An RNA of 177 nucleotides, treated with DMS and read out base by base. Conditions: 150 mM KOAc, 10 mM MgCl2 and 150 mM bicine (pH 8.5), 24 C.
[RMDB]
RNA sequence: GGGAACGACUCGAGUAGAGUCGAAAACCCCUCGCCCGGAGCUUCUCUCUGGCUACUACCCGGUGGAUACAACUGAAGCUUCAACCCCAAACCGCUUUUCUUGAAUCUUCACUGCUCUCCGGACGAGCAAAUUGAAGCAGUUCGCUGCUUCAAUUUGAAAAGAAACAACAACAACAAC
Reactivity to DMS in 0.01 (KOAc 150mM, MgCl2 10mM, bicine 150mM(pH8.5), 24C), signal-to-noise 1, nucleotides 027 to 126: c010c000c010c010u000c000g010c000c000c010g050g030a050g030c300u010u000c060u010c050u020c030u000g000g030c050u020a070c130u000a080c110c010c030g030g070u030g020g000a070u010a050c090a070a090c140u000g010a080a050g000c080u010u000c070a030a130c050c020c020c040a020a180a100c130c090g000c030u000u000u000u000c030u000u000g000a070a060u010c010u000u000c010a080c070u000g020c120u020c010u000c000c030g020g000a020c020g000a000g010
About this RNA:
The DMS profile rests on 639 reads.